[RMDB]
RNA sequence: GGGAACGACUCGAGUAGAGUCGAAAAGAGAUAUUUGCACCGCAUGGCGCGCUAAACAACUUUGCUAAAGGUUAUGAAUGCGCCAUUAAUUGCUUGACUCGUUGCAAAAACAAGAUUAAAGCCGGCCUAGAUCCUAUUACACGACGAUUAUUGGAAACACAUCAGAGGAUUUCGAUCCUCUGAUGUGAAAAGAAACAACAACAACAAC
Reactivity to 2A3 in 0.01 (KOAc 150mM, MgCl2 10mM, bicine 150mM(pH8.5), 24C), signal-to-noise 2, nucleotides 027 to 156: g050a000g010a010u070a060u180u050u020g010c010a010c030c070g020c050a010u010g000g000c000g040c000g030c030u080a130a040a000c020a000a000c010u000u030u110g030c020u280a200a010a040g020g020u050u090a050u070g060a080a030u090g000c000g020c000c030a000u010u010a000a020u000u070g010c000u080u120g010a130c070u030c100g060u090u070g060c040a070a090a050a120a120c030a010a070g050a050u050u070a180a030a000g020c000c000g000g000c000c000u030a030g030a080u010c000c000u010a030u050u160a060c140a010c060g190a000c010g050a030u080u080a120u300u030g050g030a000a140a000
Reactivity to DMS in 0.01 (KOAc 150mM, MgCl2 10mM, bicine 150mM(pH8.5), 24C), signal-to-noise 1, nucleotides 027 to 156: g020a110g020a160u000a080u010u000u000g080c040a170c050c070g000c180a090u010g010g010c000g090c030g000c110u000a090a140a060c040a020a020c020u000u000u000g010c190u000a110a100a050g010g020u000u000a090u000g010a060a160u010g030c030g030c010c020a070u020u000a070a090u010u000g000c050u020u010g000a120c060u010c000g030u000u020g020c070a030a090a120a050a030c060a060a070g010a120u000u010a070a170a090g020c000c040g000g000c020c020u010a140g000a090u010c040c030u010a070u000u000a120c060a100c090g000a060c040g020a070u000u000a120u000u020g030g000a150a120a150